[RMDB]
RNA sequence: GGGAACGACUCGAGUAGAGUCGAAAAGUAUGUAUGGAUAACCAUACGUACAAAUAAUUGCCUCAUGGUGGUGGCUGGGGGCAUCCUCAUGGUGGUGGGUGUGGAAAAUAAAGAUCCGAAAGGAUCAGGAUAGCAUGAACUUCGGUUCAUGCUAUCCAAAAGAAACAACAACAACAAC
Reactivity to DMS in 0.01 (KOAc 150mM, MgCl2 10mM, bicine 150mM(pH8.5), 24C), signal-to-noise 2, nucleotides 027 to 126: g040u000a000u000g000u000a000u000g000g020a300u050a120a090c000c000a000u000a000c000g060u000a000c000a030a120a130u000a060a180u030u030g000c020c010u000c100a080u010g000g080u010g000g000u010g000g000c140u030g020g000g020g030g050c190a050u010c070c050u000c040a080u030g020g000u040g000g030u010g000g000g040u040g000u030g000g000a040a110a060a050u080a000a060a070g000a020u000c000c000g060a050a030a100g000g010a000u000c020a000
Reactivity to 2A3 in 0.01 (KOAc 150mM, MgCl2 10mM, bicine 150mM(pH8.5), 24C), signal-to-noise 2, nucleotides 027 to 126: g000u010a000u010g020u000a000u000g000g020a230u110a300a180c000c000a000u000a000c000g010u000a000c000a010a050a000u220a030a030u210u160g020c010c000u030c000a040u010g010g010u060g000g070u000g030g000c030u040g030g000g000g010g030c000a020u000c010c010u040c010a010u030g030g070u040g030g010u080g000g000g020u080g010u000g000g110a130a040a000a000u180a000a080a020g000a000u000c000c000g010a000a030a020g000g000a000u020c000a000